[RMDB]
RNA sequence: GGGAACGACUCGAGUAGAGUCGAAAAAUUUAAAGAGUGCGUAACAGCUCACUAGUCGAGCGAUCGAGCGUGGAUAAUAAUCGGGCAUAAGCAUAGUACCGAAGAUAUGGAAUUGAAAAAUUGGUAGUUGCAUACUGUCAUUCGUGACAGUAUGCAAAAAAGAAACAACAACAACAAC
Reactivity to DMS in 0.01 (KOAc 150mM, MgCl2 10mM, bicine 150mM(pH8.5), 24C), signal-to-noise 3, nucleotides 027 to 126: a070u030u040u020a060a090a090g010a020g000u000g000c060g000u030a040a060c190a220g010c010u000c040a070c060u010a070g010u000c130g000a050g020c070g000a070u020c070g000a190g000c070g020u000g010g000a070u000a070a090u000a090a070u010c040g020g010g050c090a110u000a060a100g020c130a080u010a070g000u030a100c000c030g000a000a060g000a110u020a040u000g000g000a040a060u010u000g000a070a070a030a040a070u020u000g020g010u020a080g030
Reactivity to 2A3 in 0.01 (KOAc 150mM, MgCl2 10mM, bicine 150mM(pH8.5), 24C), signal-to-noise 1, nucleotides 027 to 126: a000u140u180u120a020a040a000g080a010g140u020g000c000g000u040a200a100c000a000g030c000u060c040a080c040u030a090g050u110c000g000a000g000c020g010a030u000c060g000a000g000c010g000u070g000g050a020u010a080a030u050a070a130u060c000g000g070g000c060a080u070a120a040g000c000a000u010a000g010u080a070c010c000g080a010a000g080a100u030a120u000g020g090a000a070u250u010g150a020a020a020a020a020u000u110g060g000u080a080g120
An RNA of 177 nucleotides, treated with DMS and 2A3 and read out base by base.
DMS adducts were read by reverse transcription with MarathonRT.
Values cover nucleotides 27 to 126.
For 2A3 the reverse transcriptase was SuperScript II with manganese.